Chemical mapping of a 177-nucleotide RNA with DMS. For DMS the reverse transcriptase was MarathonRT. The reactions ran in a buffer of 150 mM KOAc, 10 mM MgCl2 and 150 mM bicine (pH 8.5), at 24 C. It was measured as part of the RMDB library TTRINS. Values cover nucleotides 27 to 126.
RNA sequence: GGGAACGACUCGAGUAGAGUCGAAAAGAUAUGGACUCACUACCCACCGACCGAAGUGGCAAUGAUGUGCCGGAGCUCGGAAACGAGCUCCGGCAUUGAGCCACCGGUCGAGGUGAGUCCUAAGUCACAGUAGUAAGAUCUUCGGAUCUUACUACUGAAAAGAAACAACAACAACAAC
Reactivity to DMS in 0.01 (KOAc 150mM, MgCl2 10mM, bicine 150mM(pH8.5), 24C), signal-to-noise 1, nucleotides 027 to 126: g000a070u010a200u020g020g010a050c020u010c010a060c010u000a070c050c020c080a300c210c010g000a000c010c010g030a080a150g100u000g000g000c010a270a060u000g010a020u010g020u020g010c010c010g020g040a010g060c030u010c000g020g000a060a040a190c000g020a030g020c020u000c000c000g000g020c010a000u000u000g000a220g010c000c000a020c040c000g000g000u010c000g010a020g000g020u000g000a000g000u000c000c000u010a010a070g010u020c140a210